[RMDB]
RNA sequence: GGGAACGACUCGAGUAGAGUCGAAAAAGCCUGCAACUACUAAUAGCUUCGUGGUCGCUUCUUCCAAAGCGGCAGGAGUGUCUUGCGUUGCGUUUUGCGACGGGGGCAUAUCUGCGGAGUUACAUUUGCUGAGGAUUUACUUCGGUAAAUCCUCAGCAAAAGAAACAACAACAACAAC
Reactivity to 2A3 in 0.01 (KOAc 150mM, MgCl2 10mM, bicine 150mM(pH8.5), 24C), signal-to-noise 2, nucleotides 027 to 126: a000g090c010c020u040g040c020a130a040c100u130a030c010u110a080a120u070a230g000c000u000u000c000g000u020g050g000u070c000g000c000u020u000c040u100u000c070c050a020a020a000g000c000g000g000c000a010g000g000a060g010u000g000u010c020u010u050g300c000g010u000u010g020c010g040u040u040u110u300g000c010g000a000c000g000g000g000g000g000c000a000u040a230u060c000u040g000c000g000g000a000g000u010u060a040c040a150u040u000u000